[RMDB]
RNA sequence: GGGAACGACUCGAGUAGAGUCGAAAACGUUGCUGAUGAUUCAGGUACUCCCGUUGUUGAGUAUCUGUCUAAAGAAGACCUACAUACAUUGUAUGUAGACCCUAAGUAUCAAGUCAUUGUCUUAAAACUAGCUUACCUAGUUCGCUAGGUAAGCUAGAAAAGAAACAACAACAACAAC
Reactivity to 2A3 in 0.01 (KOAc 150mM, MgCl2 10mM, bicine 150mM(pH8.5), 24C), signal-to-noise 2, nucleotides 027 to 126: c020g060u040u130g020c060u020g020a060u000g020a030u090u000c000a000g020g000u000a000c000u010c010c010c010g070u060u090g000u020u020g000a000g000u000a000u000c000u000g030u000c030u110a170a140a030g080a020a010g020a010c000c000u010a000c000a000u000a000c020a090u140u300g000u000a000u000g030u000a010g050a060c020c010c000u040a100a000g070u030a030u160c100a090a070g130u080c020a130u020u170g120u050c050u020u040a120a100a030a030
Reactivity to DMS in 0.01 (KOAc 150mM, MgCl2 10mM, bicine 150mM(pH8.5), 24C), signal-to-noise 2, nucleotides 027 to 126: c090g010u010u000g000c090u020g010a110u010g010a050u010u000c030a020g010g010u000a000c000u000c010c080c150g000u010u000g000u000u010g000a000g000u000a000u000c000u000g000u000c050u000a080a040a110g020a130a120g000a040c090c010u000a000c010a000u010a020c010a280u010u000g020u000a000u000g020u010a020g020a100c030c000c040u000a070a070g010u000a080u000c090a080a070g000u010c080a050u010u010g000u000c030u000u000a050a050a160a140